[RMDB]
RNA sequence: GGGAACGACUCGAGUAGAGUCGAAAACGAUCCUCGAGAGAGGAUCGACGAGUCUUCGGACUCGAUUACCGCGAUGAUGUGCCGCGGGGCUACGAUGGUAUUGUGGGAAAGAAUACCAUUGUACCUUCUUGUCGUAGCCGAACAACUAGCACGUCGAAUUACGUAUACUAUUCGUAGUAUACGUAAUAAAAGAAACAACAACAACAAC
Reactivity to 2A3 in 0.01 (KOAc 150mM, MgCl2 10mM, bicine 150mM(pH8.5), 24C), signal-to-noise 9, nucleotides 027 to 156: c020g000a000u000c000c000u010c010g050a060g000a010g000a000g040g000a000u000c000g000a010c000g000a000g000u000c010u040u150c250g100g000a000c000u000c000g000a060u120u190a090c000c010g000c000g020a070u140g000a000u000g010u000g000c000c000g020c010g030g030g000g000c000u000a000c000g010a010u100g000g000u000a010u010u040g010u020g010g010g050a080a220a120g150a110a080u090a120c000c000a000u000u020g000u000a000c000c000u160u200c120u140u290g030u020c000g000u000a000g000c000c000g000a030a010c040a030a070c040u120a010g000c000a000c000g010u000c010g000a010
Reactivity to DMS in 0.01 (KOAc 150mM, MgCl2 10mM, bicine 150mM(pH8.5), 24C), signal-to-noise 6, nucleotides 027 to 156: c040g030a010u000c010c000u000c010g020a300g010a300g010a030g020g010a010u000c000g010a060c060g000a030g020u000c010u000u000c290g040g000a030c000u000c000g010a080u000u000a230c020c010g010c030g000a100u000g020a040u000g020u000g010c020c020g020c030g020g020g010g020c010u000a010c000g010a050u000g020g010u010a010u000u010g010u000g000g000g000a160a120a240g000a180a180u000a060c010c000a010u000u010g010u000a020c020c020u010u010c150u010u010g020u000c020g020u000a030g020c000c000g000a070a100c080a060a130c120u010a080g010c000a000c000g010u000c000g010a190
The record gives the reactivity of an RNA of 207 nucleotides to 2A3 and DMS. Source: RMDB library OK3TST, as collected in RNAgym. For 2A3 the reverse transcriptase was SuperScript II with manganese. For 2A3, 53,060 sequencing reads were counted.